Chemical mapping of a 177-nucleotide RNA with 2A3. The RNA was probed in 150 mM KOAc, 10 mM MgCl2 and 150 mM bicine (pH 8.5) at 24 C. For 2A3, 618 sequencing reads were counted.
RNA sequence: GGGAACGACUCGAGUAGAGUCGAAAACUCUGUCCCCUGUUAGGUCCCAGGGUCCUCUAGGUGAGGGUGCAGAAUCUUUUUCCAUGUGGAUACUCCAGUCUGAGGGACAGAACCACUCACCCUCUGCAACCGUCCUCUACUUCGGUAGAGGACGGUUAAAAGAAACAACAACAACAAC
Reactivity to 2A3 in 0.01 (KOAc 150mM, MgCl2 10mM, bicine 150mM(pH8.5), 24C), signal-to-noise 2, nucleotides 027 to 126: c050u050c000u000g010u070c030c000c000c010u010g050u100u240a040g010g020u110c000c040c060a000g000g010g000u040c040c000u000c060u070a090g230g000u190g060a030g000g000g000u100g010c000a000g070a300a130u080c080u100u070u050u050u090c010c040a080u040g000u160g100g050a040u090a300c000u000c050c040a150g070u000c070u050g030a120g050g020g000a000c000a000g010a000a000c100c000a050c060u070c000a050c000c000c000u030c070u060g000c020
For 2A3 the reverse transcriptase was SuperScript II with manganese. Reactivities are given for positions 27 through 126.